The record gives the reactivity of an RNA of 177 nucleotides to DMS and 2A3.
For DMS the reverse transcriptase was MarathonRT.
2A3 adducts were read by reverse transcription with SuperScript II with manganese.
The RNA was probed in 150 mM KOAc, 10 mM MgCl2 and 150 mM bicine (pH 8.5) at 24 C.
The 2A3 profile rests on 1,770 reads.
It was measured as part of the RMDB library OK2TST.
Values cover nucleotides 27 to 126.

[RMDB]
RNA sequence: GGGAACGACUCGAGUAGAGUCGAAAAUGGCUAGGGCUGCCGGCAUCGGACCCGGCCCUAGAAGAUGCCACGGCCGCAACCAACGCUUUCGUUGAGCGCCUUGGGUUGCCGAUGCAGCCCAAGAUCGCGACACUGGAGAGUUCGCUCUCCAGUGUCGAAAAGAAACAACAACAACAAC
Reactivity to DMS in 0.01 (KOAc 150mM, MgCl2 10mM, bicine 150mM(pH8.5), 24C), signal-to-noise 2, nucleotides 027 to 126: u000g010g000c020u000a050g000g010g020c000u000g000c190c050g000g000c000a010u000c000g000g010a110c080c050c030g000g000c010c000c000u010a010g000a110a090g000a140u000g010c010c020a120c100g000g010c000c040g040c060a110a100c080c020a070a130c080g010c170u000u000u000c170g010u000u000g000a090g020c020g020c270c020u000u000g000g000g010u000u000g000c000c060g010a040u000g000c010a010g000c000c010c000a020a020g000a080u010c070g010
Reactivity to 2A3 in 0.01 (KOAc 150mM, MgCl2 10mM, bicine 150mM(pH8.5), 24C), signal-to-noise 2, nucleotides 027 to 126: u070g050g000c010u010a010g000g010g040c080u000g040c030c030g010g030c010a020u030c020g080g010a140c010c030c030g010g000c000c020c000u040a050g000a050a040g070a050u210g010c000c000a030c020g040g000c030c010g030c030a030a080c060c020a030a010c040g000c000u050u180u240c100g080u130u190g040a020g020c020g020c010c020u010u010g030g020g000u010u010g010c000c020g020a040u110g030c000a000g000c000c000c000a000a000g010a060u070c100g000